[RMDB]
RNA sequence: GGGAACGACUCGAGUAGAGUCGAAAAUCGUACUGAAGGCGAACUGAUUACGAAAGAAAAAGAAUUAGUUCAAUUGAAAUUUACACCUGAAAAUAUUGAUAACGUUGAUAAAGAAUAUAUCGCGAGAAUGAGACUUUUAGUUCGCUAAAAGUCUCAUAAAAGAAACAACAACAACAAC
Reactivity to DMS in 0.01 (KOAc 150mM, MgCl2 10mM, bicine 150mM(pH8.5), 24C), signal-to-noise 2, nucleotides 027 to 126: u020c090g010u020a020c190u010g000a190a020g030g000c300g000a030a020c000u000g020a030u010u000a070c060g070a030a100a100g030a050a040a110a120a190g010a060a030u000u000a000g000u000u000c010a000a300u150u000g000a070a050a080u000u010u000a010c060a200c020c040u000g000a080a040a050a140u020a040u090u010g000a130u030a050a080c060g020u000u040g020a000u000a000a110a110g000a060a090u020a090u000a000u010c010g000c010g000a100g000a090
Reactivity to 2A3 in 0.01 (KOAc 150mM, MgCl2 10mM, bicine 150mM(pH8.5), 24C), signal-to-noise 2, nucleotides 027 to 126: u100c000g020u000a040c050u080g030a020a010g010g040c020g020a020a030c010u010g000a020u000u120a240c030g090a090a140a040g240a020a180a020a010a000g040a000a000u000u000a010g000u010u010c000a040a040u090u080g020a090a020a030u110u070u120a010c120a030c000c000u000g090a030a010a030a030u150a040u040u230g110a070u040a300a010c050g000u060u220g010a040u010a120a100a040g150a300a000u080a040u020a010u150c040g000c000g020a000g070a110